[RMDB]
Source: RMDB library OK2TST, as collected in RNAgym. An RNA of 177 nucleotides, treated with DMS and read out base by base.

RNA sequence: GGGAACGACUCGAGUAGAGUCGAAAAUUGGGAUAGGAUUUGUUUGAGCAAUUUGUCAAAAUCCUUUUUUUCAUGGUAUAAGCGGAUUUUAUGGCUGAGAUUGUGCUUGAAUAAAAAAACCCAUGAAGAAGAGAAUCGAAUUCGUUCGAUUCUCUUCAAAAGAAACAACAACAACAAC
Reactivity to DMS in 0.01 (KOAc 150mM, MgCl2 10mM, bicine 150mM(pH8.5), 24C), signal-to-noise 1, nucleotides 027 to 126: u010u000g000g010g020a070u010a070g010g010a290u000u000u000g030u000u000u000g020a090g000c010a040a090u000u000u010g000u010c000a040a040a010a010u000c000c000u000u000u000u000u000u000u000c050a060u020g010g000u020a070u000a020a040g030c250g010g000a040u000u000u000u010a050u020g010g000c020u000g020a070g000a090u000u020g000u010g010c010u020u000g020a010a060u030a010a030a030a030a130a150a100c040c000c030a020u000g020a090a150
The DMS profile rests on 1,003 reads.